RNA sequence: GGGAACGACUCGAGUAGAGUCGAAAAGAUAUGGACGGUGCGGAGAGGAACUACUUGUGUCUCUCGGAAACGAGAGACCAAGCCCUCGGAUAGCCGUCCUAAGUCAAAAUCACCGUUCGCGGUGAAACCGUGUUUAAAUCUUCGGAUUUAAACACGGAAAAGAAACAACAACAACAAC
Reactivity to 2A3 in 0.01 (KOAc 150mM, MgCl2 10mM, bicine 150mM(pH8.5), 24C), signal-to-noise 5, nucleotides 027 to 126: g030a020u100a030u120g000g010a000c000g000g000u100g110c260g240g120a090g010a050g080g040a120a110c100u180a040c010u300u010g130u100g000u300c000u010c000u010c000g000g010a020a060a020c020g000a000g000a000g000a010c000c000a000a000g020c020c000c000u000c000g000g000a030u070a030g000c000c010g000u000c000c010u000a020a000g010u010c020a000a020a030a300u050c000a010c000c000g000u090u100c300g010c020g140g010u020g000a070a010a020
Reactivity to DMS in 0.01 (KOAc 150mM, MgCl2 10mM, bicine 150mM(pH8.5), 24C), signal-to-noise 4, nucleotides 027 to 126: g000a020u010a300u000g010g000a020c010g010g010u000g020c180g030g000a160g000a040g000g000a080a080c090u040a220c000u000u000g010u010g010u000c000u000c010u000c000g020g000a060a060a200c000g000a020g010a010g000a010c010c010a010a000g000c200c000c000u010c000g010g020a170u010a250g000c000c010g000u000c000c000u000a010a080g010u000c030a080a070a120a120u010c000a010c000c000g010u010u010c180g020c010g000g020u000g000a020a050a140
Chemical mapping of a 177-nucleotide RNA with 2A3 and DMS. The 2A3 profile rests on 9,051 reads. The RNA was probed in 150 mM KOAc, 10 mM MgCl2 and 150 mM bicine (pH 8.5) at 24 C. The DMS profile rests on 4,573 reads. 2A3 adducts were read by reverse transcription with SuperScript II with manganese.